Notes: This 177-nucleotide RNA was probed chemically with 2A3 and DMS. Source: RMDB library VIROID, as collected in RNAgym. For 2A3 the reverse transcriptase was SuperScript II with manganese. Reactivities are given for positions 27 through 126. The RNA was probed in 150 mM KOAc, 10 mM MgCl2 and 150 mM bicine (pH 8.5) at 24 C.
[RMDB]
RNA sequence: GGGAACGACUCGAGUAGAGUCGAAAAGGUAACUUGGGGUUUGUGUCGACAUAAGUUUCGUCCUAAAAGGACUCAUCAGGUAGCCUAAUAGACUACGACUUAUGCGGUAGGUCGUGAAUACGCCCGGCUACGCUCUUAAGUUCGCUUAAGAGCGUAGAAAAGAAACAACAACAACAAC
Reactivity to 2A3 in 0.01 (KOAc 150mM, MgCl2 10mM, bicine 150mM(pH8.5), 24C), signal-to-noise 2, nucleotides 027 to 126: g010g010u030a040a030c020u050u060g030g000g000g060u010u070u170g110u050g000u040c000g020a120c050a090u200a070a100g000u060u110u080c020g000u000c000c010u050a060a090a000a060g090g010a040c000u000c030a120u060c000a000g050g040u030a020g000c020c010u020a020a060u070a100g100a080c060u050a000c080g010a010c000u030u000a020u120g140c100g120g030u030a040g000g010u010c010g000u000g050a020a040u120a040c060g010c000c000c000g010g010
Reactivity to DMS in 0.01 (KOAc 150mM, MgCl2 10mM, bicine 150mM(pH8.5), 24C), signal-to-noise 4, nucleotides 027 to 126: g020g020u000a080a070c060u010u000g020g000g000g010u000u010u010g020u010g010u000c020g010a090c030a090u000a050a080g010u000u020u010c160g020u000c050c010u010a060a080a130a180g020g000a030c010u010c050a100u020c110a040g010g020u000a110g020c010c010u000a080a160u010a100g000a050c040u000a030c030g010a030c010u000u000a030u000g000c110g020g020u000a060g010g000u010c010g020u000g010a060a100u000a080c120g000c020c010c010g010g000